RNA sequence: GGGAACGACUCGAGUAGAGUCGAAAAGCAUGGAUUAACAGUGUGAGAGGGUCCUCACCCCUCACACUCCACCACUUCCAACAGUUUGUUUUGGUUUUAGCUAUUGGCUUCUGUAAUCACCAAGGGAAGUAUCACGUAUAUUCGUAUACGUGAUACUAAAAGAAACAACAACAACAAC
Reactivity to 2A3 in 0.01 (KOAc 150mM, MgCl2 10mM, bicine 150mM(pH8.5), 24C), signal-to-noise 9, nucleotides 027 to 126: g070c060a070u080g010g050a080u110u130a130a060c040a070g000u010g000u040g020a010g060a150g010g010g010u140c060c050u100c090a080c000c000c000c000u000c000a000c000a000c000u000c010c010a050c010c000a030c020u060u030c010c010a050a040c040a140g050u050u090u080g130u030u070u070u050g100g000u060u050u070u090a020g000c020u050a110u140u160g060g000c010u050u020c020u110g080u040a050a070u090c020a030c070c020a040a020g040g010g030a090
Reactivity to DMS in 0.01 (KOAc 150mM, MgCl2 10mM, bicine 150mM(pH8.5), 24C), signal-to-noise 9, nucleotides 027 to 126: g010c160a140u000g000g000a130u010u020a100a140c260a040g010u000g010u000g000a010g010a120g020g010g000u010c150c160u020c260a250c020c000c000c010u010c000a000c010a000c010u000c070c110a080c080c040a080c090u000u010c020c020a080a090c170a070g000u010u000u010g000u010u000u010u000g010g010u010u010u000u010a060g010c030u000a090u010u000g010g010c040u000u020c060u020g010u010a060a060u010c090a060c030c030a040a060g010g000g010a100
The record gives the reactivity of an RNA of 177 nucleotides to 2A3 and DMS. It was measured as part of the RMDB libraries RFM100 and RFMREP. For DMS the reverse transcriptase was MarathonRT.